This 177-nucleotide RNA was probed chemically with 2A3 and DMS. The data come from the RNA Mapping Database (RMDB), library OK1LIB. The RNA was probed in 150 mM KOAc, 10 mM MgCl2 and 150 mM bicine (pH 8.5) at 24 C. Values cover nucleotides 27 to 126.
[RMDB]
RNA sequence: GGGAACGACUCGAGUAGAGUCGAAAAGAAAGAAAAGCAGGUCAGCAUGUCGGAUCUGCAACGAUAUGCAAAAAGAAAAAGCCAGUGAGCUGUAUGCAUUGGCAACAUAUAGCAAAAGAAAAGAAAAGGGAUAAGCUAAGUUCGCUUAGCUUAUCCCAAAAGAAACAACAACAACAAC
Reactivity to 2A3 in 0.01 (KOAc 150mM, MgCl2 10mM, bicine 150mM(pH8.5), 24C), signal-to-noise 2, nucleotides 027 to 126: g030a000a030a010g020a020a060a000a010g070c050a030g080g050u130c050a010g000c030a140u070g030u110c030g000g060a120u050c090u170g000c020a030a000c000g070a000u020a000u020g060c080a120a100a000a000a000g220a030a010a020a050a000g070c040c000a000g000u010g030a050g000c030u010g050u030a070u120g000c010a040u000u030g110g000c010a020a020c010a000u030a010u070a030g070c080a000a000a130a000g160a040a020a040a020g300a000a050a000a110
Reactivity to DMS in 0.01 (KOAc 150mM, MgCl2 10mM, bicine 150mM(pH8.5), 24C), signal-to-noise 1, nucleotides 027 to 126: g020a180a040a010g000a030a060a110a190g000c040a110g000g000u020c040a110g020c030a100u000g090u000c000g000g010a140u020c010u000g000c160a010a040c110g000a060u000a040u000g000c000a000a120a070a070a130g000a140a040a070a070a030g040c000c000a020g010u000g020a260g000c000u000g000u020a070u060g000c040a020u030u040g000g050c100a100a090c010a000u050a020u000a080g000c050a080a090a080a110g000a120a020a050a210g000a090a060a070a050